[RMDB]
RNA sequence: GGGAACGACUCGAGUAGAGUCGAAAACUGGCCUGUGUGGAAGUACGUGAGUACUUCACUCUCUACGGGAGUAGAGACACACAGAUCGUGGAGCGAUGUCUUGGAACUACUCCCGUAGUUCACGUAUGACUCACGUCAUACCAAGACGCCAGCCACGCGAUGCAAGUUAGUUCGCUAACUUGCAUCGAAAAGAAACAACAACAACAAC
Reactivity to 2A3 in 0.01 (KOAc 150mM, MgCl2 10mM, bicine 150mM(pH8.5), 24C), signal-to-noise 3, nucleotides 027 to 156: c000u000g000g010c000c000u020g010u000g010u010g040g020a090a050g000u070a010c000g030u020g020a000g010u090a180c000u100u070c020a030c010u120c000u000c000u000a000c000g030g000g000a010g000u000a000g020a000g030a010c010a010c000a010c010a000g010a000u020c010g020u120g130g150a150g120c010g020a020u010g010u010c000u000u000g030g010a020a060c000u000a000c010u010c010c030c000g000u000a010g000u050u160c090a090c130g070u080a050u130g000a010c000u020c010a000c030g000u000c010a020u030a080c010c010a000a000g010a010c010g000c000c000a000g000c020c000a050c030g020
Reactivity to DMS in 0.01 (KOAc 150mM, MgCl2 10mM, bicine 150mM(pH8.5), 24C), signal-to-noise 1, nucleotides 027 to 156: c020u010g000g030c030c020u010g080u030g010u030g020g040a080a070g040u000a000c010g010u000g000a240g030u020a020c060u000u000c070a130c100u000c020u000c010u020a030c000g040g050g010a120g000u000a010g010a070g010a290c030a030c010a010c010a050g020a030u000c030g090u040g020g000a290g010c030g020a060u000g030u000c010u010u040g000g000a120a150c000u010a000c020u010c060c080c120g040u000a040g020u020u000c030a090c110g030u000a030u000g010a130c010u000c050a010c150g060u000c020a070u000a080c020c050a020a040g010a020c000g040c020c010a030g020c000c030a060c070g000
Chemical mapping of a 207-nucleotide RNA with 2A3 and DMS. For DMS, 2,024 sequencing reads were counted. DMS (dimethyl sulfate) methylates the pairing face of unpaired adenines and cytosines. Reactivities are given for positions 27 through 156. Conditions: 150 mM KOAc, 10 mM MgCl2 and 150 mM bicine (pH 8.5), 24 C. DMS adducts were read by reverse transcription with MarathonRT.